[RMDB]
RNA sequence: GGGAACGACUCGAGUAGAGUCGAAAAACAUCAGCAUUAAAUUAUCGUAGAUUGUCAAAUAGAGUAUUAAGAGAAUUGUUGUAUUUAUCAGUUCCAAAGAAUACUAUAAAUAUUGGUCCAAGAAAUGAUUUACUGAUAGAUUCGUCUAUCAGUAAAUAAAAGAAACAACAACAACAAC
Reactivity to DMS in 0.01 (KOAc 150mM, MgCl2 10mM, bicine 150mM(pH8.5), 24C), signal-to-noise 3, nucleotides 027 to 126: a080c060a050u010c060a080g020c070a040u000u010a060a080a080u010u010a040u000c060g020u020a080g020a100u010u010g020u010c060a050a050a120u000a080g000a050g000u000a020u010u000a060a120g000a190g010a020a030u000u010g010u000u000g000u010a080u000u020u000a050u010c010a030g000u010u000c010c030a050a160a190g010a030a010u000a000c010u010a090u000a100a070a090u000a060u000u000g000g000u000c030c030a080a080g000a100a070a060u000g010
Reactivity to 2A3 in 0.01 (KOAc 150mM, MgCl2 10mM, bicine 150mM(pH8.5), 24C), signal-to-noise 2, nucleotides 027 to 126: a020c000a060u040c010a000g050c000a010u050u200a100a150a120u110u120a090u130c010g000u000a080g020a050u010u130g010u030c020a000a040a100u100a110g050a010g080u020a000u070u050a060a040g140a000g010a070a010u010u020g050u020u050g050u070a250u090u240u080a030u060c000a000g010u020u000c000c000a000a000a220g090a010a090u050a020c050u050a040u190a300a170a000u140a150u120u070g040g000u000c050c020a030a010g100a040a090a090u120g050
Description: The record gives the reactivity of an RNA of 177 nucleotides to DMS and 2A3. The 2A3 profile rests on 1,266 reads.